This 177-nucleotide RNA was probed chemically with DMS and 2A3. For 2A3 the reverse transcriptase was SuperScript II with manganese.
[RMDB]
RNA sequence: GGGAACGACUCGAGUAGAGUCGAAAAGAUAUGGAAGCCUACCCACCUCCGAAGCAGCGACGAAGUCGGAAACGACAGAGCUGUCAAGGAGAGGGCUUCCUAAGUCAAAGGCUACUUCGGUAGCCAACAUGAUUAGAAUGUUCGCAUUCUAAUCAUGAAAAGAAACAACAACAACAAC
Reactivity to DMS in 0.01 (KOAc 150mM, MgCl2 10mM, bicine 150mM(pH8.5), 24C), signal-to-noise 9, nucleotides 027 to 126: g010a130u010a140u010g010g010a010a010g010c000c000u000a160c010c010c020a300c110c000u000c000c000g010a300a230g000c000a010g010c000g010a150c230g000a090a110g000u000c000g020g000a070a050a180c010g010a020c000a040g000a130g010c000u000g010u000c020a020a300g000g000a010g000a050g010g000g010c000u000u000c000c000u010a020a060g010u010c140a090a110a170g010g000c000u000a000c000u000u010c150g020g010u000a000g000c000c010a030a050
Reactivity to 2A3 in 0.01 (KOAc 150mM, MgCl2 10mM, bicine 150mM(pH8.5), 24C), signal-to-noise 9, nucleotides 027 to 126: g020a080u190a150u270g000g010a010a000g000c000c010u070a170c170c010c010a030c010c000u000c010c000g070a140a010g000c010a000g010c000g250a300c060g050a300a010g010u000c010g010g050a120a050a030c010g000a000c000a010g030a010g020c000u010g030u060c020a020a020g000g000a000g000a000g000g000g000c000u010u000c000c000u000a040a010g060u040c120a160a040a090g010g000c000u000a000c010u060u150c280g140g000u000a000g000c020c000a000a000
About this RNA: The reactions ran in a buffer of 150 mM KOAc, 10 mM MgCl2 and 150 mM bicine (pH 8.5), at 24 C.